[RMDB]
Chemical mapping of a 177-nucleotide RNA with DMS and 2A3. It was measured as part of the RMDB library RFM100. The 2A3 profile rests on 556 reads. For DMS the reverse transcriptase was MarathonRT. Values cover nucleotides 27 to 126.

RNA sequence: GGGAACGACUCGAGUAGAGUCGAAAAUAAAAAAACCAUCUAGUAAGGUAAAUGACCGGACGAGCGUUACAUAAAACGCAUACCUAACUAAUGAAGAAUUUGAAACUGUACAAUGUGAAUGACGAAAUUAGCAUGAUGUGUUCGCACAUCAUGCUAAAAAAGAAACAACAACAACAAC
Reactivity to DMS in 0.01 (KOAc 150mM, MgCl2 10mM, bicine 150mM(pH8.5), 24C), signal-to-noise 2, nucleotides 027 to 126: u010a000a000a070a010a050a040a040c060c000a040u000c080u020a000g050u020a130a020g010g000u000a000a210a150u000g000a210c040c040g000g010a060c100g010a160g000c000g100u000u000a040c190a110u010a040a090a000a040c030g010c000a210u000a030c000c000u040a060a040c010u050a040a070u000g000a230a060g000a070a070u000u010u000g000a050a030a070c020u000g040u000a150c220a110a060u020g010u000g000a080a050u000g000a130c150g000a020a000a060
Reactivity to 2A3 in 0.01 (KOAc 150mM, MgCl2 10mM, bicine 150mM(pH8.5), 24C), signal-to-noise 1, nucleotides 027 to 126: u220a000a070a000a000a000a010a000c070c000a120u070c070u000a000g000u000a070a020g030g000u000a030a100a070u080g090a100c020c000g080g000a030c000g190a140g000c000g000u000u010a000c110a120u240a050a300a000a000c000g000c000a010u050a080c000c000u000a000a070c000u040a050a000u160g000a040a220g080a040a040u300u290u060g000a050a010a010c080u110g100u140a070c090a000a040u280g020u120g000a000a270u200g000a040c000g080a000a000a130